[RMDB]
RNA sequence: GGGAACGACUCGAGUAGAGUCGAAAAUGAGGAAUAGACCAGUCACAAUUAUUGUCAGAGAUCAGAGGUCACAGGUCACAAGUCAUAUUAUGUGCAUAACAGAGUCAUCAGCCCUCAGAUAUGAUCAACUAUUAGUCUUCGAGGACAAUCUCGAUGCGAGACAUAACUUCUUCGGAAGUUAUGUCUCAAAAGAAACAACAACAACAAC
Reactivity to DMS in 0.01 (KOAc 150mM, MgCl2 10mM, bicine 150mM(pH8.5), 24C), signal-to-noise 3, nucleotides 027 to 156: u000g040a070g030g010a090a130u010a100g020a140c050c000a120g020u010c050a070c050a070a120u000u000a070u000u010g020u010c040a090g010a160g020a040u000c090a080g010a090g010g020u000c000a070c080a080g020g010u010c050a070c050a080a160g010u010c040a100u010a040u000u000a060u010g010u000g020c080a090u000a080a110c040a300g030a130g000u010c040a120u000c060a060g030c050c000c010u000c020a050g010a040u000a040u000g020a050u000c030a090a070c110u000a090u010u000a070g010u000c040u000u000c060g010a060g000g010a060c060a040a050u000c020u020c030g020a110u000g060c270
Reactivity to 2A3 in 0.01 (KOAc 150mM, MgCl2 10mM, bicine 150mM(pH8.5), 24C), signal-to-noise 6, nucleotides 027 to 156: u080g010a030g040g050a020a070u040a080g050a060c050c020a030g070u130c030a010c030a090a100u130u070a070u100u230g040u050c050a020g010a000g010a090u050c020a030g010a020g100g060u080c040a030c020a080g020g020u040c010a020c030a090a060g030u030c030a010u020a060u160u090a100u100g040u040g020c020a010u050a120a040c040a060g040a020g080u020c010a030u040c040a080g050c010c010c000u050c020a030g020a040u080a050u140g060a050u080c030a050a050c040u080a090u230u090a030g010u000c030u020u030c030g010a000g010g050a080c090a070a160u040c000u000c000g000a000u050g010c030